Chemical mapping of a 207-nucleotide RNA with DMS and 2A3. For 2A3 the reverse transcriptase was SuperScript II with manganese. For DMS the reverse transcriptase was MarathonRT. For DMS, 2,723 sequencing reads were counted. For 2A3, 1,452 sequencing reads were counted. 2A3 is a SHAPE reagent: it acylates the 2'-hydroxyl of flexible nucleotides of all four kinds. DMS (dimethyl sulfate) methylates the pairing face of unpaired adenines and cytosines.
[RMDB]
RNA sequence: GGGAACGACUCGAGUAGAGUCGAAAAAUUGGCGCGACACUCACAGCGGAGCUGGCGACAAUUACCAGCAAUUACCAGCAAAAACAGCAGGCAAUAGACAGCGGCAAACAGCAAGAAAAAACCGCGAUUGAUGAGAUUGCCACCGCAACCGUGGCGGUGUAAAGAGGUGAUUCGUCACCUCUUUACAAAAAGAAACAACAACAACAAC
Reactivity to DMS in 0.01 (KOAc 150mM, MgCl2 10mM, bicine 150mM(pH8.5), 24C), signal-to-noise 2, nucleotides 027 to 156: a050u010u000g020g040c000g030c020g000a300c120a070c050u000c040a070c040a210g020c100g000g000a120g040c000u000g010g000c030g020a090c030a040a150u000u000a100c050c000a050g000c000a110a110u010u000a050c060c000a150g000c050a050a100a040a090a120c130a080g030c000a040g010g040c030a040a040u000a170g000a150c070a150g000c040g020g020c040a060a080a120c040a130g000c000a080a120g010a000a040a110a070a140a030c000c000g040c030g010a100u010u010g020a060u010g010a150g030a140u010u000g020c030c030a000c030c030g000c030a020a080c070c040g000u030g010g000c000g010g010
Reactivity to 2A3 in 0.01 (KOAc 150mM, MgCl2 10mM, bicine 150mM(pH8.5), 24C), signal-to-noise 3, nucleotides 027 to 156: a000u050u020g030g000c030g000c010g040a010c020a010c010u030c010a120c050a070g020c040g040g000a040g010c020u020g010g010c040g060a050c040a040a140u100u060a070c020c010a020g030c000a000a020u140u020a090c030c080a020g000c050a070a000a010a090a070c030a030g090c020a020g010g000c010a000a010u040a020g080a050c030a040g030c000g010g040c030a050a080a050c030a070g100c060a080a120g100a120a130a040a020a000a010c000c000g010c080g100a070u030u140g090a120u050g010a060g000a040u020u110g030c000c010a010c000c000g050c020a000a070c080c080g060u070g060g000c010g020g030